[RMDB]
RNA sequence: GGGAACGACUCGAGUAGAGUCGAAAACGUGCCAUAACUCUACUAGUGGGAUACCACGCUUGUGGACCUUAUGCCCACACAGCCAUCCUCUAGUAAGUUUGUAAGACGUCUGAUGACGUGUGGGAAACUGCCAGAGAACCUUCGGGUUCUCUGGCAGAAAAGAAACAACAACAACAAC
Reactivity to DMS in 0.01 (KOAc 150mM, MgCl2 10mM, bicine 150mM(pH8.5), 24C), signal-to-noise 1, nucleotides 027 to 126: c030g070u040g000c070c020a060u000a070a000c000u000c150u000a000c000u000a060g030u070g010g000g020a000u010a080c300c300a100c300g040c000u000u000g000u030g000g000a080c000c250u000u010a080u050g030c030c000c060a010c050a000c280a000g080c000c260a030u000c000c000u010c030u000a070g000u030a030a000g000u000u060u000g000u000a130a090g030a010c060g000u020c000u090g000a030u000g030a000c060g020u000g000u040g050g000g010a230a150a110
Reactivity to 2A3 in 0.01 (KOAc 150mM, MgCl2 10mM, bicine 150mM(pH8.5), 24C), signal-to-noise 1, nucleotides 027 to 126: c000g120u140g020c060c000a000u010a050a000c010u130c090u000a000c000u050a000g030u220g060g000g110a000u030a090c100c000a010c110g000c000u000u020g000u000g000g000a000c010c010u240u170a090u210g030c000c000c000a000c020a040c110a000g000c000c000a000u000c000c000u000c070u010a030g000u050a010a010g000u000u130u090g300u140a010a020g080a000c000g000u010c080u140g140a110u230g000a000c030g010u010g040u090g030g020g000a070a070a040